[RMDB]
RNA sequence: GGGAACGACUCGAGUAGAGUCGAAAACAUGGAGUCUUCGGACUCCAUGCACUACCGAAAUAAUGCCUCGGUAUAAAUGGCAAACCCUUGGAAACAAGGGAACGAUGUCACGAUUCGUCGUGACAAAAGUGCUAUAGGUAUUCGUACCUAUAGCACUAAAAGAAACAACAACAACAAC
Reactivity to 2A3 in 0.01 (KOAc 150mM, MgCl2 10mM, bicine 150mM(pH8.5), 24C), signal-to-noise 9, nucleotides 027 to 126: c000a000u010g000g000a010g000u000c020u060u070c300g090g000a000c000u000c000c000a000u000g000c000a030c020u040a010c000c000g030a040a050a060u210a070a060u090g010c010c000u010c010g000g000u050a060u090a300a070a030u200g020g000c020a030a040a280c000c000c000u000u010g010g020a040a030a020c000a000a010g000g000g020a010a000c030g060a040u100g000u000c000a000c000g010a000u040u050c150g060u000c000g000u100g000a000c000a000a020a000
Reactivity to DMS in 0.01 (KOAc 150mM, MgCl2 10mM, bicine 150mM(pH8.5), 24C), signal-to-noise 8, nucleotides 027 to 126: c000a000u000g000g000a010g010u000c000u000u010c200g020g010a010c000u000c000c000a000u000g010c070a200c040u000a020c000c000g010a080a150a100u000a120a110u000g000c010c000u000c000g000g010u000a060u010a010a040a060u010g010g020c000a030a070a200c010c000c000u010u000g000g000a130a120a210c010a020a010g010g000g010a040a030c220g000a170u000g000u000c000a010c000g010a040u000u020c180g010u000c000g010u000g000a000c000a020a020a060
Record summary: Structure probing data (2A3 and DMS) for a 177-nucleotide construct. For 2A3, 31,340 sequencing reads were counted. The RNA was probed in 150 mM KOAc, 10 mM MgCl2 and 150 mM bicine (pH 8.5) at 24 C. It was measured as part of the RMDB library M2PK50. The DMS profile rests on 12,742 reads.